[RMDB]
RNA sequence: GGGAACGACUCGAGUAGAGUCGAAAAGGAUAGAGUACCUGACUACGAAUCAGGCGGUUAGAGGUUCGACUCCUCUAGGGUGCAUCAGUUCGGGAAGUAGCUCAGCUUGGUAGAGUACUUGGUUUGGGACCAAGGUGUCGCAGGUUCGAAUCCUGUAGAUACCUAUUAAUUUCGAUUAAUAGGUAUCAAAAGAAACAACAACAACAAC
Reactivity to 2A3 in 0.01 (KOAc 150mM, MgCl2 10mM, bicine 150mM(pH8.5), 24C), signal-to-noise 7, nucleotides 027 to 156: g040g010a070u110a060g080a020g050u080a060c000c010u010g050a070c020u100a060c110g060a070a060u050c010a030g030g000c020g010g010u030u040a010g010a000g010g010u040u070c030g030a030c030u010c030c000u010c010u020a020g040g030g030u060g010c020a060u040c040a080g080u130u110c050g050g010g020a040a050g030u050a030g020c010u010c070a020g020c030u050u070g020g020u090a050g010a010g090u050a040c010u020u020g040g040u080u120u130g070g020g030a000c010c010a020a030g040g010u060g010u040c050g000c020a000g000g000u010u030c010g010a020a050u010c000c000u000g000u000a040
Reactivity to DMS in 0.01 (KOAc 150mM, MgCl2 10mM, bicine 150mM(pH8.5), 24C), signal-to-noise 5, nucleotides 027 to 156: g000g000a110u000a070g010a220g020u000a030c000c010u000g010a090c040u000a140c130g010a120a100u000c030a040g020g010c010g030g000u000u000a020g010a050g010g010u010u000c070g020a300c080u000c010c010u000c020u000a050g010g010g040u000g020c040a090u010c050a100g010u000u010c080g030g010g020a070a110g000u000a080g010c030u000c020a080g010c050u000u000g020g030u000a110g010a140g020u000a050c020u010u000g010g010u000u000u000g030g020g010a130c050c010a030a080g000g010u000g010u000c070g030c020a040g020g010u000u000c060g000a300a220u000c010c000u010g010u000a100

Chemical mapping of a 207-nucleotide RNA with 2A3 and DMS. The 2A3 profile rests on 8,754 reads. High 2A3 reactivity points to a flexible backbone, as in loops and unpaired stretches. Conditions: 150 mM KOAc, 10 mM MgCl2 and 150 mM bicine (pH 8.5), 24 C. The data come from the RNA Mapping Database (RMDB), library OK3TST. DMS adducts were read by reverse transcription with MarathonRT.